[RMDB]
RNA sequence: GGGAACGACUCGAGUAGAGUCGAAAACGGGACAUGCCGGAGUCACUGCGUACGUUCUGAAGAACGGGCCAGGGAGUGUACGGCAGGGGCGAGGCUAAGGAGUGAAACUCCGAAGCCGGAGGGAAACCCAAAUCAGCCUUUUCGAAGGCUGAUUUGGAAAAGAAACAACAACAACAAC
Reactivity to DMS in 0.01 (KOAc 150mM, MgCl2 10mM, bicine 150mM(pH8.5), 24C), signal-to-noise 2, nucleotides 027 to 126: c060g030g000g010a200c120a130u030g050c010c010g000g050a170g000u000c020a010c000u000g000c300g000u010a000c000g010u010u010c000u020g060a250a230g000a010a000c040g000g000g000c020c010a000g030g060g000a040g040u040g000u000a080c000g030g000c060a060g000g030g080g010c110g000a160g050g040c020u010a080a300g000g010a010g020u000g020a110a040a300c000u000c000c000g000a220a020g000c030c000g000g020a120g000g040g000a140a150a090c140
Reactivity to 2A3 in 0.01 (KOAc 150mM, MgCl2 10mM, bicine 150mM(pH8.5), 24C), signal-to-noise 4, nucleotides 027 to 126: c030g000g010g040a040c070a120u060g000c000c000g030g010a090g060u010c010a010c020u010g040c090g050u030a040c010g000u000u010c030u180g280a300a160g010a000a000c000g020g030g000c000c000a000g000g000g000a010g030u120g010u050a020c000g000g000c020a010g010g000g000g020c090g050a140g000g000c000u020a060a010g000g000a010g000u230g120a110a150a080c000u000c010c000g000a010a000g000c000c010g000g000a000g000g000g000a030a040a050c010